[RMDB]
RNA sequence: GGGAACGACUCGAGUAGAGUCGAAAAGUUAGGCGAGGCUCCUAUACAAACACAGGUUGCUGAUCUGACGACGUCGAGAGACGCCCAAGAUUAGGACAGGAUAUAUCGAGCCAAGGUAUAUCCCCAUAAAACUCGGAACACUUCGGUGUUCCGAGAAGACACAUAAUGAGUUCGCUCAUUAUGUGUCAAAAGAAACAACAACAACAAC
Reactivity to DMS in 0.01 (KOAc 150mM, MgCl2 10mM, bicine 150mM(pH8.5), 24C), signal-to-noise 3, nucleotides 027 to 156: g010u000u010a030g020g020c050g000a190g030g050c010u000c010c040u000a120u000a130c110a130a070a140c090a100c050a070g030g020u000u010g000c010u000g000a050u000c010u020g000a190c030g020a010c000g020u000c000g010a300g000a300g000a010c010g000c010c040c090a200a070g000a030u000u000a060g030g010a190c060a060g020g020a040u000a010u000a010u000c020g010a110g040c080c070a090a110g010g010u000a060u000a040u000c020c010c010c050a080u010a040a050a070a170c010u000c000g000g020a040a020c000a010c000u000u010c290g040g020u000g020u000u000c010c010g000a010g000a000a030
Reactivity to 2A3 in 0.01 (KOAc 150mM, MgCl2 10mM, bicine 150mM(pH8.5), 24C), signal-to-noise 6, nucleotides 027 to 156: g030u040u040a020g010g040c080g050a110g050g020c030u040c030c020u100a100u100a180c130a060a180a020c120a010c030a110g110g040u200u200g070c010u020g010a070u000c010u030g000a010c020g010a010c010g000u010c010g000a020g000a010g000a120c000g020c010c010c010a010a020g030a080u090u140a030g010g040a020c050a040g020g010a000u000a000u000a000u020c020g040a040g130c060c050a050a020g020g000u000a010u000a000u020c030c000c000c000a050u170a050a170a020a040c000u000c010g000g000a000a010c010a000c010u040u090c240g100g000u000g010u000u000c000c000g000a000g000a000a000

This 207-nucleotide RNA was probed chemically with DMS and 2A3. As a SHAPE reagent, 2A3 marks flexible, mostly unpaired nucleotides at the ribose 2'-OH. DMS (dimethyl sulfate) methylates the pairing face of unpaired adenines and cytosines. The RNA was probed in 150 mM KOAc, 10 mM MgCl2 and 150 mM bicine (pH 8.5) at 24 C. For DMS the reverse transcriptase was MarathonRT. The 2A3 profile rests on 4,777 reads. The data come from the RNA Mapping Database (RMDB), library M2RFPK. Reactivities are given for positions 27 through 156.